Source information
An RNA of 177 nucleotides, treated with 2A3 and DMS and read out base by base. Conditions: 150 mM KOAc, 10 mM MgCl2 and 150 mM bicine (pH 8.5), 24 C. DMS adducts were read by reverse transcription with MarathonRT. Source: RMDB library OK2TST, as collected in RNAgym.

RNA sequence: GGGAACGACUCGAGUAGAGUCGAAAAUCGGCGGCGAAGAAUCCAGCAAGAGCAAGACCCAGACCGGCUGGACCGUCGGAGCAGGCAUCGAUUACGCCGCAACCGACAAUGUUCUUCUGCGUCUGGAGCUAUAUGGGUCGUUCGCGACCCAUAUAGCAAAAGAAACAACAACAACAAC
Reactivity to 2A3 in 0.01 (KOAc 150mM, MgCl2 10mM, bicine 150mM(pH8.5), 24C), signal-to-noise 2, nucleotides 027 to 126: u070c030g040g000c000g040g000c020g020a060a010g020a100a090u010c030c020a000g030c040a140a020g050a010g120c050a080a040g010a080c020c010c000a000g040a020c000c000g000g010c000u010g000g000a010c020c040g000u000c000g000g000a020g000c110a120g030g000c000a030u140c110g300a200u150u130a040c120g020c000c000g010c020a040a120c000c000g030a030c070a030a160u230g000u050u010c010u020u010c010u030g020c040g020u020c000u050g030g020a040
Reactivity to DMS in 0.01 (KOAc 150mM, MgCl2 10mM, bicine 150mM(pH8.5), 24C), signal-to-noise 2, nucleotides 027 to 126: u000c050g010g050c010g000g000c000g010a050a020g010a070a080u010c040c000a030g000c050a070a110g040a130g040c140a180a030g000a180c180c000c000a020g000a010c030c000g010g000c100u000g000g000a030c120c300g010u010c000g010g020a300g000c090a130g030g000c000a170u020c120g000a170u010u000a120c160g000c000c010g000c030a130a100c000c000g000a000c000a120a070u000g000u000u000c010u000u000c000u010g030c170g000u000c010u000g010g000a190